An RNA of 207 nucleotides, treated with 2A3 and read out base by base. For 2A3, 453 sequencing reads were counted. It was measured as part of the RMDB library OK3TST. The reactions ran in a buffer of 150 mM KOAc, 10 mM MgCl2 and 150 mM bicine (pH 8.5), at 24 C.
[RMDB]
RNA sequence: GGGAACGACUCGAGUAGAGUCGAAAAUUUUGCACCUUCUGAAAUAUAGCCAUUCGAAAGCAUUUUACCAUCUUCAAAGAAAUCAGCAAUAUUUUUUGCCAGCUUGCGAGCCUUAUCAAUUCCUGAACCUGGCGGGAAUUCAAUUCCGAUCUGAACCGUUACAGCUAAAGUUCGCUUUAGCUGUAACAAAAGAAACAACAACAACAAC
Reactivity to 2A3 in 0.01 (KOAc 150mM, MgCl2 10mM, bicine 150mM(pH8.5), 24C), signal-to-noise 1, nucleotides 027 to 156: u080u080u060u060g010c030a030c010c000u090u040c080u190g020a050a080a000u110a030u070a100g120c050c040a030u060u050c100g020a040a100a030g000c040a030u030u080u000u080a120c010c070a140u080c070u040u020c010a120a120a000g000a030a110a120u090c010a010g060c110a140a020u010a180u050u130u130u000u060u130g050c000c060a010g000c050u000u000g000c010g070a070g000c020c010u030u010a000u120c030a030a110u040u080c010c000u010g030a050a070c000c010u000g010g010c080g000g000g000a000a040u050u050c010a030a030u040u060c030c000g000a040u110c020u090g060a000a010c010c030